RNA sequence: GGGAACGACUCGAGUAGAGUCGAAAAGAUAUGGAAUUCACAUUUGGCGACGAAGGAAGCAUUUAAGAAUGAUCGGAAACGAUCAUUCUUAAAUGCUUCCAGAGCCAUGUGUGAGAUUCCUAAGUCACCAAAACACUAUGUUCGCAUAGUGUUUUGGAAAAGAAACAACAACAACAAC
Reactivity to DMS in 0.01 (KOAc 150mM, MgCl2 10mM, bicine 150mM(pH8.5), 24C), signal-to-noise 1, nucleotides 027 to 126: g010a070u020a300u000g000g010a040a000u000u000c010a050c030a000u000u000u010g020g010c000g010a160c270g010a090a070g000g000a030a010g010c000a030u000u000u010a020a010g010a030a000u000g000a030u000c000g020g000a100a140a200c040g000a020u000c010a020u000u000c000u000u000a000a010a000u000g000c000u000u020c000c000a010g000a060g020c000c000a000u000g000u010g000u000g000a030g020a020u000u000c000c010u010a050a140g000u000c090a260